[RMDB]
RNA sequence: GGGAACGACUCGAGUAGAGUCGAAAACUUCAAUUGGACCAGAUGGAUCACCACUUCCAACAGAUAUCAACGGGAAGCCAGCAUAUACCGUUAUUGGAAGAUACGGGGAUGUGUUACCAACCGAUUCCGACUAGAACGAGUUCGCUCGUUCUAGUCGAAAAGAAACAACAACAACAAC
Reactivity to DMS in 0.01 (KOAc 150mM, MgCl2 10mM, bicine 150mM(pH8.5), 24C), signal-to-noise 2, nucleotides 027 to 126: c080u000u010c070a080a110u010u010g000g010a120c100c070a100g000a090u000g020g010a110u000c050a080c070c040a180c030u000u000c000c000a050a060c160a170g000a070u010a050u020c150a080a020c010g010g000g000a080a160g010c050c040a050g000c060a080u020a080u010a050c050c010g000u000u000a110u000u000g000g000a020a030g010a050u010a040c120g000g000g010g000a030u000g010u000g000u000u000a150c050c040a100a050c100c030g000a120u000u000c100
Reactivity to 2A3 in 0.01 (KOAc 150mM, MgCl2 10mM, bicine 150mM(pH8.5), 24C), signal-to-noise 2, nucleotides 027 to 126: c010u140u110c040a060a180u080u110g050g000a070c040c010a090g070a220u060g060g000a050u070c030a010c030c000a040c030u030u000c000c000a080a020c030a080g170a160u160a050u210c040a000a020c020g000g040g000a040a040g070c040c020a040g000c030a040u080a000u010a120c000c010g010u070u070a050u050u060g050g030a020a020g000a060u070a100c080g030g000g010g040a030u050g020u000g020u120u010a020c020c000a060a020c010c040g020a030u100u000c020
About this RNA
The data come from the RNA Mapping Database (RMDB), library OK2TST. Chemical mapping of a 177-nucleotide RNA with DMS and 2A3. The RNA was probed in 150 mM KOAc, 10 mM MgCl2 and 150 mM bicine (pH 8.5) at 24 C. For DMS, 1,442 sequencing reads were counted.